[RMDB]
RNA sequence: GGGAACGACUCGAGUAGAGUCGAAAACGGCGUCUGGUCUCUUAUUUCUUCCUUCUGAGAAGAGGAGACAGCUUGCCGCUCGCCCCCAGACCCGAGAUGAGCCUCGUGCCGAGGAGAGGCCGGAGACAAACUAAGGCGUUCGCGCCUUAGAAAAGAAACAACAACAACAAC
Reactivity to 2A3 in 0.01 (KOAc 150mM, MgCl2 10mM, bicine 150mM(pH8.5), 24C), signal-to-noise 7, nucleotides 027 to 129: c000g000g010c010g040u070c020u060g140g090u080c000u000c010u040u120a250u150u170u020c010u020u020c010c040u220u260c130u200g160a190g000a210a010g010a020g000g000a010g000a000c000a000g000c050u040u220g010c000c000g000c010u040c040g030c020c000c000c000c020a020g020a120c000c000c000g020a020g000a030u030g010a000g000c000c020u020c030g030u060g030c010c010g000a040g000g020a010g000a000g020g000c000c000g010g000a030g000a010c010a010a090a020
Reactivity to DMS in 0.01 (KOAc 150mM, MgCl2 10mM, bicine 150mM(pH8.5), 24C), signal-to-noise 7, nucleotides 027 to 129: c050g050g050c000g050u020c030u020g040g030u030c000u030c010u030u050a200u020u010u000c030u020u020c080c070u020u100c200u100g060a170g040a050a020g000a030g000g000a020g050a080c010a020g010c090u040u050g040c000c040g030c060u000c070g050c060c010c020c050c020a080g000a170c220c000c010g010a070g020a060u030g030a090g070c030c020u010c000g000u040g060c110c010g000a050g060g010a020g040a050g020g020c050c000g000g030a100g040a100c080a090a080a180
Chemical mapping of a 170-nucleotide RNA with 2A3 and DMS.
It was measured as part of the RMDB library 15KLIB.
In probing experiments dimethyl sulfate is read out at A N1 and C N3, which are open when not base-paired.
2A3 adducts were read by reverse transcription with SuperScript II with manganese.
For DMS, 22,305 sequencing reads were counted.